Structure probing data (2A3 and DMS) for a 207-nucleotide construct. It was measured as part of the RMDB library OK3TST. For DMS the reverse transcriptase was MarathonRT. The RNA was probed in 150 mM KOAc, 10 mM MgCl2 and 150 mM bicine (pH 8.5) at 24 C.

[RMDB]
RNA sequence: GGGAACGACUCGAGUAGAGUCGAAAACGACUGCUGGCCUACGUCGUGGAAUACUCGCAGCAGCGCAAGGACAAGGGCUACCGCUUGCCGAAGCUGACCAAAGGCAUGUUAUCCGAUCACUUCCGCAACUUCGCAGAGCCGCCGAUUAAGCGGACGGAUGUCAGCAGUUUUUCGAAACUGCUGACAUAAAAGAAACAACAACAACAAC
Reactivity to 2A3 in 0.01 (KOAc 150mM, MgCl2 10mM, bicine 150mM(pH8.5), 24C), signal-to-noise 2, nucleotides 027 to 156: c040g110a070c000u070g080c030u070g050g030c020c040u080a050c020g020u020c000g040u010g030g070a100a080u100a130c010u020c070g100c010a030g000c030a030g020c020g010c120a080a120g020g000a090c010a050a100g040g000g000c030u070a090c010c010g030c030u040u040g000c000c000g030a080a030g020c040u010g030a050c010c010a120a020a000g030g020c020a060u100g020u070u080a090u020c040c030g040a040u010c030a020c160u040u020c010c010g010c050a040a110c030u080u040c020g040c040a000g000a040g170c010c000g060c030c040g060a090u100u090a100a010g000c000g000g000a000c000g060g000
Reactivity to DMS in 0.01 (KOAc 150mM, MgCl2 10mM, bicine 150mM(pH8.5), 24C), signal-to-noise 1, nucleotides 027 to 156: c050g000a020c020u010g000c020u000g030g020c050c020u010a060c030g000u000c060g020u000g040g010a120a140u000a010c020u000c020g010c070a110g060c020a080g030c060g040c110a100a130g040g030a060c090a070a120g030g000g030c030u020a050c100c000g010c030u010u000g030c000c020g000a090a070g050c030u020g020a050c040c020a080a120a250g040g010c070a150u000g030u010u000a180u000c020c000g030a120u020c030a020c040u000u000c010c020g060c000a060a040c090u030u030c040g030c070a070g000a120g030c010c000g000c010c030g000a170u000u010a060a180g020c010g000g030a050c040g020g010